The data come from the RNA Mapping Database (RMDB), library TTRDES. An RNA of 177 nucleotides, treated with 2A3 and DMS and read out base by base. 2A3 adducts were read by reverse transcription with SuperScript II with manganese. The 2A3 profile rests on 6,963 reads.

RNA sequence: GGGAACGACUCGAGUAGAGUCGAAAAAAAAAGAUAUGGAUCGUGCUCCCCACCAUAGCUCUGCGUUGAAAGCAUGUCGGAAACGACAUGCUGGAGCAGGCUAUGAGGCACGAUCCUAAGUCAAAAAGUAGGAAAUUAUGUUCGCAUAAUUUCCUACAAAAGAAACAACAACAACAAC
Reactivity to 2A3 in 0.01 (KOAc 150mM, MgCl2 10mM, bicine 150mM(pH8.5), 24C), signal-to-noise 3, nucleotides 027 to 126: a000a000a010a000a040g010a010u030a000u020g000g010a010u000c000g000u000g000c000u050c030c010c010c000a000c000c000a000u010a010g020c040u050c030u300g000c000g270u300u030g000a000a000a000g010c010a000u000g000u010c000g010g000a000a000a000c010g000a010c010a010u020g010c000u010g000g010a000g030c000a000g000g000c000u000a000u000g000a010g010g000c000a000c000g000a000u010c000c000u000a000a000g010u000c030a040a050a090a130a160
Reactivity to DMS in 0.01 (KOAc 150mM, MgCl2 10mM, bicine 150mM(pH8.5), 24C), signal-to-noise 4, nucleotides 027 to 126: a040a040a080a120a070g000a030u010a080u010g000g010a000u010c000g000u000g000c020u000c080c010c000c010a300c030c010a000u000a000g000c000u020c010u000g020c000g000u010u000g010a120a080a030g000c000a010u000g010u000c010g000g000a000a020a040c000g000a010c000a000u000g010c000u000g000g000a010g020c010a000g000g000c000u000a000u000g000a060g020g000c010a020c000g010a010u000c000c000u000a000a050g000u010c020a080a070a100a120a130